[RMDB]
RNA sequence: GGGAACGACUCGAGUAGAGUCGAAAAGAUAUGGAGGUUUGGGCUUUUGACGAUGUUGCCCUCUGCGUAGGAUAGGAUCGGAAACGAUCCCUGAGGGCAACAUCGAUAAGCCUUUGCCUCCUAAGUCCUACUAUGGAAUCUUCGGAUUCCAUAGUAGAAAAGAAACAACAACAACAAC
Reactivity to DMS in 0.01 (KOAc 150mM, MgCl2 10mM, bicine 150mM(pH8.5), 24C), signal-to-noise 4, nucleotides 027 to 126: g000a110u010a300u000g030g010a030g010g020u000u010u000g000g010g020c000u000u000u010u000g000a270c140g020a020u000g000u000u000g000c010c000c010u000c000u000g010c230g010u020a150g030g010a280u020a130g000g000a010u010c000g010g000a120a130a240c010g010a010u000c000c000c060u000g010a020g000g000g000c010a000a000c010a000u000c000g000a040u010a000a020g010c000c000u000u000u000g000c000c000u000c000c000u000a010a050g010u000c060
Reactivity to 2A3 in 0.01 (KOAc 150mM, MgCl2 10mM, bicine 150mM(pH8.5), 24C), signal-to-noise 4, nucleotides 027 to 126: g060a080u150a090u300g000g000a020g000g000u000u080u020g070g010g000c030u090u100u150u300g210a170c050g010a000u000g000u000u000g000c020c060c010u000c010u060g140c270g300u300a190g120g300a230u200a300g010g000a000u000c000g010g010a100a060a060c030g010a010u010c030c000c000u000g000a000g000g000g000c000a000a000c010a000u000c000g000a000u000a000a000g000c000c010u010u010u010g000c010c000u010c010c000u000a010a010g010u000c010